[RMDB]
RNA sequence: GGGAACGACUCGAGUAGAGUCGAAAAGAUAUGGACCAUCUACCCACCGAAAUUGGGAGCUUGGAUUUACUUCUCGGAAACGAGAAGUUGUCAGCUCAAAUUUCGAGGAUGGUCCUAAGUCAAAACUGCCUUCACCUCUUCGGAGGUGAAGGCAGAACACGACUAUUAUGUUCGCAUAAUAGUCGUGAAAAGAAACAACAACAACAAC
Reactivity to DMS in 0.01 (KOAc 150mM, MgCl2 10mM, bicine 150mM(pH8.5), 24C), signal-to-noise 1, nucleotides 027 to 156: g000a120u000a140u010g010g030a060c010c000a000u010c000u000a050c010c000c010a300c140c010g000a010a010a030u000u010g000g070g000a010g040c000u020u000g050g040a060u000u000u020a010c000u000u000c000u000c000g020g000a120a150a300c000g030a000g000a020a010g020u000u020g050u000c020a030g020c010u000c020a060a030a020u010u000u000c010g000a130g020g000a020u000g010g030u000c020c000u000a000a170g080u010c020a100a020a080a130c020u000g000c000c010u010u000c000a030c000c000u010c000u000u010c300g000g060a010g080g050u000g000a020a050g020g030c000a000g020a000a060
Reactivity to 2A3 in 0.01 (KOAc 150mM, MgCl2 10mM, bicine 150mM(pH8.5), 24C), signal-to-noise 2, nucleotides 027 to 156: g070a030u200a150u220g000g000a000c010c000a010u010c030u090a250c040c000c000a000c030c000g000a000a000a020u080u070g200g250g020a020g000c040u120u170g110g000a040u210u160u120a020c020u000u000c010u000c000g040g060a130a090a060c000g010a010g000a010a000g000u020u010g000u000c020a020g000c000u010c010a010a010a000u000u000u010c000g000a000g010g000a000u000g000g000u000c000c000u000a000a000g060u040c060a000a010a140a170c000u030g000c000c000u000u000c010a020c000c010u030c000u040u090c290g090g000a020g000g000u000g000a010a000g010g000c000a000g000a000a000